RNA sequence: GGGAACGACUCGAGUAGAGUCGAAAAUUAAGGACUUACUUAGGUCCAGACUGCUUUCGAUGAGCUUUGAUCUCAUUACCUCCCGCUUACUAAACGGGUGCUCUACCAAUUGAGCUACGAAAGCAAAAGGGGAACUCUGACCUGGCGGAAUCGAACCCGCCAGGAACGAAUUCGUUCGUUCCUGGCGAAAAGAAACAACAACAACAAC
Reactivity to 2A3 in 0.01 (KOAc 150mM, MgCl2 10mM, bicine 150mM(pH8.5), 24C), signal-to-noise 1, nucleotides 027 to 156: u100u070a180a140g000g000a000c020u040u190a020c050u110u140a160g030g010u040c010c000a000g040a050c030u020g020c000u000u010u040c030g080a060u020g070a050g000c000u130u230u290g100a170u070c050u000c010a040u020u010a070c010c060u010c010c000c000g000c040u090u160a230c050u060a060a050a000c030g060g000g000u050g000c000u000c000u020a140c090c010a050a030u090u110g010a020g010c000u010a030c070g040a000a000a000g000c010a000a030a060a000g030g000g010g010a030a020c020u000c020u090g020a030c000c000u010g010g000c000g000g110a030a040u090c090g010a070a000c020c060